The record gives the reactivity of an RNA of 177 nucleotides to 2A3 and DMS. The RNA was probed in 150 mM KOAc, 10 mM MgCl2 and 150 mM bicine (pH 8.5) at 24 C. Values cover nucleotides 27 to 126. The data come from the RNA Mapping Database (RMDB), library 15KREP.
RNA sequence: GGGAACGACUCGAGUAGAGUCGAAAACGCUCGGGAUGGGCCUCAGUGCCGACGAGGAGUCCGCAGGUGGGAGGAUCAGCCACCGGAGAGGGACGCGAUGGUAAGAGUGGAGGAAAGUUCGGAGGGAGUCGUAAUGAAAGUUCGCUUUCAUUACGACAAAAGAAACAACAACAACAAC
Reactivity to 2A3 in 0.01 (KOAc 150mM, MgCl2 10mM, bicine 150mM(pH8.5), 24C), signal-to-noise 1, nucleotides 027 to 126: c000g050c040u000c020g050g000g120a140u100g030g000g070c050c010u070c090a050g020u020g110c040c000g040a030c010g030a020g060g050a030g010u050c070c020g000c080a010g040g000u000g060g020g000a100g090g000a090u080c050a030g070c010c020a010c010c030g000g020a040g020a000g060g000g000a030c040g000c020g030a020u050g030g000u020a050a020g030a000g070u100g070g030a070g000g030a120a070a000g080u050u030c010g030g010a020g010g030g000a070
Reactivity to DMS in 0.01 (KOAc 150mM, MgCl2 10mM, bicine 150mM(pH8.5), 24C), signal-to-noise 2, nucleotides 027 to 126: c180g020c030u000c020g000g010g000a120u010g030g000g000c000c030u000c160a080g000u010g010c000c030g000a050c070g000a080g010g020a190g000u000c020c020g030c090a120g010g030u010g010g010g030a120g000g000a060u000c130a120g010c010c010a040c020c010g030g020a090g010a090g000g030g000a030c060g010c040g010a090u010g000g000u020a050a080g020a110g000u010g040g050a070g010g000a060a060a060g010u010u010c050g000g020a110g010g000g010a100